[RMDB]
RNA sequence: GGGAACGACUCGAGUAGAGUCGAAAAAAAGGACGGUGGGGAGUGCCCAGCGGCCGACAGGAGUAAUUCCCGCCGAAACAGGGUUUUCACCCUUCCUUUCUUCGGGUGUCCUUCCUCGCGCCCGCAGGACCACCCCUCGCCCCCUUUGCGCUGUCGCGAUUCUAUUAAGCUUCGGCUUAAUAGAAUCAAAAGAAACAACAACAACAAC
Reactivity to 2A3 in 0.01 (KOAc 150mM, MgCl2 10mM, bicine 150mM(pH8.5), 24C), signal-to-noise 1, nucleotides 027 to 156: a000a070a000g000g010a020c000g030g040u020g000g080g020g020a030g000u050g000c000c030c050a060g010c020g000g020c040c080g020a100c270a000g010g000a000g040u080a010a040u080u070c000c000c000g000c020c010g010a010a040a090c300a070g060g010g050u100u150u300u300c220a070c000c000c000u000u010c000c000u000u010u000c000u000u020c020g000g000g000u000g030u000c010c000u060u030c020c010u010c000g000c000g010c020c010c010g010c000a010g000g020a070c110c040a040c000c020c000c000u000c000g000c000c000c000c010c000u020u050u060g010c150g000c160u140g130u230c080g000c030